[RMDB]
RNA sequence: GGGAACGACUCGAGUAGAGUCGAAAAGGUUCGCACUUCGGUGCGAACCAAAGGCUAAGCAAUAAAUAUCAGCUUGUUCGCUAAGCCACUAACGAGCUGAAAAAACCGUUUGGUUCGCCAAACGGAACGUAACAUUGGUCUUCGGACCAAUGUUACGAAAAGAAACAACAACAACAAC
Reactivity to 2A3 in 0.01 (KOAc 150mM, MgCl2 10mM, bicine 150mM(pH8.5), 24C), signal-to-noise 1, nucleotides 027 to 126: g050g020u000u000c000g020c060a010c010u090u070c240g130g000u000g020c020g000a000a000c010c010a000a030a000g020g000c050u090a040a000g050c030a070a110u090a230a160a050u160a130u030c000a000g010c000u000u020g000u020u010c010g000c030u030a130a000g000c070c050a040c060u040a030a020c020g000a000g000c000u000g020a080a020a000a000a000a050c010c010g000u000u000u000g020g000u010u000c170g010c050c000a010a000a020c020g000g020a010a020
Reactivity to DMS in 0.01 (KOAc 150mM, MgCl2 10mM, bicine 150mM(pH8.5), 24C), signal-to-noise 1, nucleotides 027 to 126: g000g010u000u000c000g000c000a030c000u000u010c180g000g030u050g020c000g000a020a000c000c000a040a000a120g020g020c020u000a070a150g040c100a250a070u010a050a080a090u000a120u010c000a000g000c000u000u000g010u000u010c300g000c040u000a080a060g020c050c030a100c200u040a020a030c010g000a000g000c000u000g000a020a040a050a130a020a060c010c010g030u000u000u000g010g000u010u010c300g040c020c000a000a000a010c000g000g010a010a040